[RMDB]
RNA sequence: GGGAACGACUCGAGUAGAGUCGAAAAGUGUAUACAUUCACAGCCAAGUACGGCGAAAAGCUCGCUCCACUACUCAUCACACCAGAACAAGACAGCGAUCCUAGAAACCACAUGUCACAAGAAGCAAUGACAAAAUUCGCCAACGACGUCUCCAGACCUGCAGACUAUAGUUCGCUAUAGUCUGCAGAAAAGAAACAACAACAACAAC
Reactivity to 2A3 in 0.01 (KOAc 150mM, MgCl2 10mM, bicine 150mM(pH8.5), 24C), signal-to-noise 3, nucleotides 027 to 156: g020u030g040u040a070u040a170c060a040u060u140c030a010c010a020g070c010c000a020a030g130u100a030c030g020g000c020g040a050a050a010a020g040c020u030c050g020c010u040c030c000a020c030u090a030c010u020c020a100u070c050a050c010a040c030c040a040g010a110a020c050a100a000g100a040c020a020g040c020g070a040u030c000c030u080a050g120a040a080a020c040c070a010c000a120u100g020u030c040a020c010a080a030g030a050a010g020c030a010a110u120g020a030c030a010a050a010a060u090u010c020g030c040c000a030a010c040g060a010c050g010u030c010u000c030c030a040g030a090c180
Reactivity to DMS in 0.01 (KOAc 150mM, MgCl2 10mM, bicine 150mM(pH8.5), 24C), signal-to-noise 1, nucleotides 027 to 156: g020u000g020u000a230u010a110c070a280u000u010c010a040c040a120g040c030c000a060a200g060u000a040c080g000g000c010g000a080a090a140a120g010c010u000c030g000c060u020c010c020a080c010u020a060c040u000c020a120u000c040a020c060a100c030c020a130g030a090a040c090a140a140g000a110c000a040g000c000g010a040u000c040c000u010a040g020a150a100a070c010c070a010c020a120u000g010u010c000a110c040a090a180g010a020a000g000c030a010a070u030g010a070c020a000a090a080a080u010u000c010g010c010c030a070a060c030g080a030c030g010u000c100u010c010c010a050g020a150c100
An RNA of 207 nucleotides, treated with 2A3 and DMS and read out base by base. DMS adducts were read by reverse transcription with MarathonRT.